Structure probing data (DMS) for a 177-nucleotide construct. For DMS, 979 sequencing reads were counted. The RNA was probed in 150 mM KOAc, 10 mM MgCl2 and 150 mM bicine (pH 8.5) at 24 C.
RNA sequence: GGGAACGACUCGAGUAGAGUCGAAAAGAUAUGGAGUGUGUCACUGGCGAGGUCUACGCUCGGAAACGAGCGAGACCGAUGAGCCAGUGAGCACACUCCUAAGUCAAAACGUCUCUUCGGAGACGAAGUCCUCCAUAGACUUCGGUCUAUGGAGGACAAAAGAAACAACAACAACAAC
Reactivity to DMS in 0.01 (KOAc 150mM, MgCl2 10mM, bicine 150mM(pH8.5), 24C), signal-to-noise 1, nucleotides 027 to 126: g010a060u010a300u010g010g050a000g020u000g040u010g000u000c000a010c000u000g000g000c000g000a220g010g000u000c010u000a230c000g040c000u000c000g020g000a080a110a300c040g000a000g030c000g000a030g020a010c000c000g000a060u030g080a290g020c000c000a020g000u020g010a090g040c000a000c030a010c000u000c000c000u000a000a070g000u000c060a140a090a070a200c030g010u020c000u000c000u000u020c300g010g000a030g010a020c020g020a040a060